[RMDB]
RNA sequence: GGGAACGACUCGAGUAGAGUCGAAAAUUCAAUGGAAACCGCCCCUCUCCUAGGUUAGCUGGUCAAAGAUGAUGUUCAUGCAUAUCGAUUCAGCAAUGAGAUUUUAAAGCUGGUGUCCCUAACUUGGGCCAGUGUUGGGGUCCAACGAGCAAUGGAACACUACUACCGGAUUCGUCCGGUAGUAGUGAAAAGAAACAACAACAACAAC
Reactivity to 2A3 in 0.01 (KOAc 150mM, MgCl2 10mM, bicine 150mM(pH8.5), 24C), signal-to-noise 1, nucleotides 027 to 156: u000u000c040a030a150u020g000g040a120a070a010c040c100g060c000c000c010c000u000c000u010c000c000u040a010g000g020u100u050a010g010c090u010g040g000u000c050a010a020a060g040a040u240g050a010u030g040u060u300c150a070u300g060c010a000u020a010u110c030g020a040u150u080c000a000g000c040a010a010u130g000a060g010a150u180u160u110u140a210a090a010g030c040u000g000g020u030g060u020c000c000c000u050a090a100c080u000u000g000g000g000c050c040a030g010u010g000u050u120g040g000g000g000u000c000c000a020a000c020g060a030g110c010a010a090u110g080g050a190a000
Reactivity to DMS in 0.01 (KOAc 150mM, MgCl2 10mM, bicine 150mM(pH8.5), 24C), signal-to-noise 1, nucleotides 027 to 156: u000u010c060a080a240u040g020g000a060a070a000c030c010g000c020c010c000c060u000c010u000c020c040u010a060g050g070u000u000a020g010c010u020g000g030u000c020a020a150a180g030a100u000g020a060u020g030u010u000c160a080u000g030c020a050u010a080u000c070g000a060u010u000c000a080g000c000a130a190u000g010a160g000a170u000u000u000u000a050a060a170g040c000u000g000g020u010g000u000c000c000c010u010a040a070c170u000u000g020g010g020c000c040a040g050u000g050u000u000g020g020g010g020u010c010c000a070a140c090g020a130g020c120a150a160u020g040g000a100a190